[RMDB]
RNA sequence: GGGAACGACUCGAGUAGAGUCGAAAACAUGAGACUUACAGGUGAGGGACCGACCUUCGACGCCAACACGGAGUGCAACAUCGCUUACACGCACACAAGGUUCGACAUCCCGCCCGGCACGGCACAAAGUCGACAGAAUUUUCGAAUUCUGUCGACUAAAAGAAACAACAACAACAAC
Reactivity to 2A3 in 0.01 (KOAc 150mM, MgCl2 10mM, bicine 150mM(pH8.5), 24C), signal-to-noise 4, nucleotides 027 to 126: c020a040u230g020a030g080a110c030u080u100a040c070a070g020g040u070g080a140g010g040g020a030c050c000g030a080c010c000u010u060c070g040a090c050g020c010c000a060a020c030a010c090g000g030a070g010u070g020c030a080a030c000a120u110c020g020c030u030u090a090c090a030c070g040c030a010c000a010c020a040a080g060g000u090u090c010g020a030c010a070u030c020c010c000g020c000c010c010g000g030c010a050c030g010g010c040a010c040a070a150
Reactivity to DMS in 0.01 (KOAc 150mM, MgCl2 10mM, bicine 150mM(pH8.5), 24C), signal-to-noise 2, nucleotides 027 to 126: c010a180u040g000a030g020a050c060u040u020a060c200a080g020g020u010g000a160g000g000g030a070c140c090g000a020c040c030u010u000c000g000a090c090g050c000c090a040a010c020a100c040g020g000a080g000u000g020c110a090a020c210a020u000c050g000c010u030u000a030c050a080c170g000c000a020c030a130c240a040a120g000g020u000u020c000g000a120c100a120u000c000c000c000g050c020c000c010g000g000c050a040c090g010g000c060a060c080a030a090